[RMDB]
Structure probing data (DMS and 2A3) for a 177-nucleotide construct. The 2A3 profile rests on 842 reads. For DMS the reverse transcriptase was MarathonRT. For DMS, 1,617 sequencing reads were counted.
RNA sequence: GGGAACGACUCGAGUAGAGUCGAAAAGAAAGGAGUUGGCGGACGGAUGUGGCCGGGUAUGAACGUUGGAAGGCGCUUCCGUGUGAGCGGAAUUCUUUCAUACCAAGAACGGGAUAACCGGAAGAAAGGGAUAAUCAUACUUCGGUAUGAUUAUCCCAAAAGAAACAACAACAACAAC
Reactivity to DMS in 0.01 (KOAc 150mM, MgCl2 10mM, bicine 150mM(pH8.5), 24C), signal-to-noise 2, nucleotides 027 to 126: g060a060a040a050g000g010a080g010u000u000g000g030c100g000g050a200c020g000g010a050u000g040u010g020g010c000c000g000g000g080u050a140u040g020a050a110c120g000u000u000g000g090a300a070g000g020c110g020c060u020u000c010c000g000u010g000u050g000a160g000c030g000g000a020a040u030u000c000u060u020u000c000a000u040a190c100c080a050a100g000a070a060c050g000g000g060a170u030a020a170c070c000g000g060a070a120g070a080a100a170
Reactivity to 2A3 in 0.01 (KOAc 150mM, MgCl2 10mM, bicine 150mM(pH8.5), 24C), signal-to-noise 1, nucleotides 027 to 126: g020a000a060a010g020g010a030g020u020u050g030g060c100g040g040a030c010g020g010a100u090g030u080g210g060c010c070g000g000g000u020a010u040g020a090a010c120g040u090u050g010g010a080a130g030g010c070g010c030u040u010c000c000g010u050g010u030g040a050g020c010g000g000a000a020u010u000c000u030u000u010c040a060u050a000c010c020a030a000g060a120a000c000g000g000g000a000u100a160a160c000c040g000g040a100a100g000a030a100a050